The record gives the reactivity of an RNA of 207 nucleotides to DMS.
The RNA was probed in 150 mM KOAc, 10 mM MgCl2 and 150 mM bicine (pH 8.5) at 24 C.
High DMS reactivity at an A or C suggests that its Watson-Crick edge is free.
DMS adducts were read by reverse transcription with MarathonRT.
[RMDB]
RNA sequence: GGGAACGACUCGAGUAGAGUCGAAAAACCAUAUUCGUAUGGUGGUCCGAUAUGGAGUGAACUACAGAGUCAAGUGGCGAAGAACUGGCUUCGGAAACGAAGCCAGGGAGCCACGAAGCUCUGCACUCCUAAGUCAUGUAGUGGUAUUCGUACCAAAUAAAGGUUAUGUCUUCGGACAUAACCUUUAAAAAGAAACAACAACAACAAC
Reactivity to DMS in 0.01 (KOAc 150mM, MgCl2 10mM, bicine 150mM(pH8.5), 24C), signal-to-noise 1, nucleotides 027 to 156: a020c010c000a000u000a080u000u000c200g060u030a010u000g020g000u000g000g000u000c060c010g000a210u020a150u020g010g010a130g050u000g010a070a150c020u030a210c000a040g000a020g050u010c040a040a300g000u000g030g000c010g050a090a230g010a090a250c000u010g020g010c000u000u000c040g030g010a100a060a100c030g010a000a010g040c000c000a000g090g000g010a300g000c000c000a010c000g000a140a120g000c010u000c010u000g000c010a000c020u010c000c050u000a040a100g000u000c010a100u020g020u010a170g030u000g000g010u000a040u000u010c150g010u010a090c000c030a020a060a260
It was measured as part of the RMDB library RNAMAK.